[RMDB]
RNA sequence: GGGAACGACUCGAGUAGAGUCGAAAAGAAAGUGUGCACUUGAUACCGCGUGACUUCGGUCACGCGUAGUGGCAACGCAGGACUUUGCUGCCACUGCUUAGUCCUGCGGUAUCUUGUGCUCACGAAAGGGUUGCGUUACCUUCGGGUGGCGCAACCCAAAAGAAACAACAACAACAAC
Reactivity to 2A3 in 0.01 (KOAc 150mM, MgCl2 10mM, bicine 150mM(pH8.5), 24C), signal-to-noise 4, nucleotides 027 to 126: g130a020a090a010g000u000g000u000g000c000a000c000u000u010g000a000u000a000c010c000g000c010g000u000g000a000c000u020u080c250g120g000u000c000a000c030g000c000g000u010a000g010u010g120g040c070a020a010c010g000c000a000g020g000a000c010u030u010u030g020c030u080g070c040c060a110c100u040g000c020u000u010a000g000u000c000c000u010g000c010g000g000u010a000u000c000u000u000g000u000g010c000u000c000a000c000g030a070a020a000
Reactivity to DMS in 0.01 (KOAc 150mM, MgCl2 10mM, bicine 150mM(pH8.5), 24C), signal-to-noise 1, nucleotides 027 to 126: g030a070a080a180g030u000g000u000g000c000a010c020u000u050g010a020u000a000c000c000g000c010g000u000g000a020c000u080u010c170g010g000u000c000a000c000g050c000g000u000a000g050u000g000g000c150a100a140c010g030c020a010g000g010a060c020u010u000u000g010c030u000g000c040c060a090c110u000g000c000u000u020a000g010u010c000c000u000g000c000g010g050u000a000u000c000u020u030g000u000g000c000u000c000a010c010g030a030a120a100
Notes: Source: RMDB library OK1LIB, as collected in RNAgym. An RNA of 177 nucleotides, treated with 2A3 and DMS and read out base by base. 2A3 adducts were read by reverse transcription with SuperScript II with manganese. For 2A3, 8,472 sequencing reads were counted.